[RMDB]
RNA sequence: GGGAACGACUCGAGUAGAGUCGAAAAGAAACUCGUUUCGCGUUGGCUGCCUAAUUCAAGGAAUUAGCGUGCCUUCAUGCUAAGGGUUUGAUAUCAGCUAAAACCCGGUGCAUUCAUCAAUGCAGGUCUCAUCCAAAUGCCUUCGGGCAUUUGGAAAAACUAAACUAACUUUCGAGUUAGUUUAGUUAAAAGAAACAACAACAACAAC
Reactivity to DMS in 0.01 (KOAc 150mM, MgCl2 10mM, bicine 150mM(pH8.5), 24C), signal-to-noise 4, nucleotides 027 to 156: g000a110a050a040c020u000c040g020u000u000u000c050g030c060g030u000u000g010g030c000u000g030c150c010u010a030a040u000u000c020a140a150g050g010a080a040u000u000a020g010c040g020u000g000c010c010u000u000c040a090u000g010c030u000a260a150g010g010g010u000u000u000g010a160u000a090u000c110a150g020c100u000a100a040a040a080c010c000c010g000g020u000g020c010a060u000u000c080a120u000c060a060a090u010g000c000a090g020g020u000c020u010c040a230u000c010c010a010a010a010u000g010c000c010u010u010c300g050g000g030c000a000u000u000u000g010g000a000a010a030
Reactivity to 2A3 in 0.01 (KOAc 150mM, MgCl2 10mM, bicine 150mM(pH8.5), 24C), signal-to-noise 4, nucleotides 027 to 156: g040a010a040a000c020u020c080g050u040u110u070c080g010c020g000u020u020g010g010c030u090g050c060c020u010a030a010u020u030c130a250a140g190g040a050a030u000u000a000g030c050g060u050g000c010c000u020u050c060a070u080g000c010u030a020a040g000g020g010u000u000u010g020a020u030a080u150c050a000g070c060u090a040a040a020a040c010c000c020g020g030u040g010c000a010u020u110c030a060u100c050a050a060u050g050c010a020g040g090u010c040u020c090a070u000c000c000a000a010a000u010g000c010c000u050u060c160g040g000g000c000a000u010u010u010g000g000a000a010a010